[RMDB]
This 207-nucleotide RNA was probed chemically with DMS and 2A3. Values cover nucleotides 27 to 156. Conditions: 150 mM KOAc, 10 mM MgCl2 and 150 mM bicine (pH 8.5), 24 C. Source: RMDB library RNAMAK, as collected in RNAgym.
RNA sequence: GGGAACGACUCGAGUAGAGUCGAAAAGAUAUGGAAUAUACAGGCGCAGAUACUGCUCUACCCACCAGUGUUCGGAAACGAACACUGAGGAGCAGUGUAGCCUUAAUAUUCCUAAGUCAAACAACCGAGUAUAGAGUUCGCUCUAUACUCGGUUGAAGAUACGCUUUAGAUUCGUCUAAAGCGUAUCAAAAGAAACAACAACAACAAC
Reactivity to DMS in 0.01 (KOAc 150mM, MgCl2 10mM, bicine 150mM(pH8.5), 24C), signal-to-noise 1, nucleotides 027 to 156: g000a010u000a030u000g000g010a030a080u000a040u000a120c290a040g010g060c000g040c200a170g010a040u010a040c000u010g000c010u000c020u000a030c020c010c010a250c090c000a030g020u000g020u000u000c000g000g040a020a030a050c000g030a000a010c000a000c010u000g000a020g000g000a020g000c010a010g000u020g030u000a040g020c000c000u000u000a230a120u000a030u000u010c000c010u000a030a140g000u000c020a140a180a180c010a030a030c000c020g030a060g040u000a020u000a010g010a040g000u000u020c300g030c030u000c010u000a000u010a000c000u000c020g000g000u010u010g010a020a120
Reactivity to 2A3 in 0.01 (KOAc 150mM, MgCl2 10mM, bicine 150mM(pH8.5), 24C), signal-to-noise 3, nucleotides 027 to 156: g010a010u040a020u060g000g000a020a010u010a000u010a040c110a030g020g000c040g100c240a020g020a070u020a030c000u000g030c010u000c040u110a240c080c040c040a060c000c000a020g000u000g000u000u000c000g000g010a030a020a010c000g000a000a010c020a010c010u010g000a020g000g000a000g000c000a000g000u000g000u010a000g000c000c000u000u000a060a020u000a000u010u000c000c000u010a020a010g020u010c030a050a110a190c000a010a010c010c000g000a000g000u000a000u000a000g010a010g020u060u120c240g050c120u000c000u000a000u000a000c000u000c000g000g000u000u000g000a000a000
For 2A3, 5,007 sequencing reads were counted.